[RMDB]
RNA sequence: GGGAACGACUCGAGUAGAGUCGAAAAGCAUGAGUAGCGAGAGACGAGAGGGUAACUCGUCCGCCGUAAACCCGAGGUUUCCUGGGCAAGGCUAAUCCUCCCAGGGUCAGUCGGGGGCUAAGGCGAGGUUUACUUCUUCGUUCGCGAAGAAGUAAACAAAAGAAACAACAACAACAAC
Reactivity to 2A3 in 0.01 (KOAc 150mM, MgCl2 10mM, bicine 150mM(pH8.5), 24C), signal-to-noise 6, nucleotides 027 to 126: g070c020a050u130g050a040g130u150a020g060c040g030a070g010a010g010a140c010g000a010g010a030g050g140g030u070a030a040c000u000c000g000u000c000c030g010c000c000g060u090a070a040a040c000c000c000g010a020g010g030u080u160u220c010c000u010g030g000g000c150a120a010g040g000c120u150a080a070u170c000c020u120c000c010c000a000g010g000g000u020c000a030g140u000c010g000g010g010g000g010c030u060a030a020g000g020c010g000a020g010
Reactivity to DMS in 0.01 (KOAc 150mM, MgCl2 10mM, bicine 150mM(pH8.5), 24C), signal-to-noise 6, nucleotides 027 to 126: g010c090a080u010g000a100g010u010a110g010c010g030a180g010a160g010a020c010g000a010g000a040g000g010g020u020a050a100c010u000c000g010u000c010c060g020c000c000g010u020a060a120a200c000c000c010g010a020g010g000u000u020u070c000c000u010g000g010g000c170a070a030g000g020c300u040a100a140u020c010c000u000c000c000c000a010g000g000g000u000c040a070g000u000c000g000g000g000g000g000c040u010a140a150g010g010c000g000a230g000
Chemical mapping of a 177-nucleotide RNA with 2A3 and DMS. For DMS the reverse transcriptase was MarathonRT. DMS (dimethyl sulfate) methylates the pairing face of unpaired adenines and cytosines. High 2A3 reactivity points to a flexible backbone, as in loops and unpaired stretches. Values are in units of 0.01, from 0 to 300, in steps of 10. The reactions ran in a buffer of 150 mM KOAc, 10 mM MgCl2 and 150 mM bicine (pH 8.5), at 24 C. For 2A3 the reverse transcriptase was SuperScript II with manganese.